[RMDB]
An RNA of 207 nucleotides, treated with 2A3 and read out base by base. Values are in units of 0.01, from 0 to 300, in steps of 10.

RNA sequence: GGGAACGACUCGAGUAGAGUCGAAAACCUGGCUCGAAAUCGUCGACGCAUCGACGACGGUCCUGCCAUGAGACCGUAACGAGGACAUGUCGCCUCGAAUGGCGUCGUGGAGCCGGCAGCUUACCCCAAAACGACCGCAGCUUCGGCUGCGGUCGAACUUUCCUACUAUCUUCGGAUAGUAGGAAAGAAAAGAAACAACAACAACAAC
Reactivity to 2A3 in 0.01 (KOAc 150mM, MgCl2 10mM, bicine 150mM(pH8.5), 24C), signal-to-noise 2, nucleotides 027 to 156: c020c000u000g000g000c000u020c040g100a100a190a240u130c090g170u050c000g050a030c050g010c010a060u050c040g070a030c060g000a000c000g000g000u020c010c000u040g200c000c010a200u200g010a050g040a130c030c100g070u040a050a030c040g010a010g000g010a000c070a200u150g020u120c040g040c080c070u050c000g030a080a070u120g100g000c020g030u020c000g000u020g050g000a000g000c010c020g000g020c020a060g030c010u060u110a170c030c000c000c000a000a000a060a010c040g000a000c000c000g000c000a000g000c000u160u040c240g190g000c000u040g010c020g000g000u000c000g010a000a000
The reactions ran in a buffer of 150 mM KOAc, 10 mM MgCl2 and 150 mM bicine (pH 8.5), at 24 C. The data come from the RNA Mapping Database (RMDB), library M2RFPK.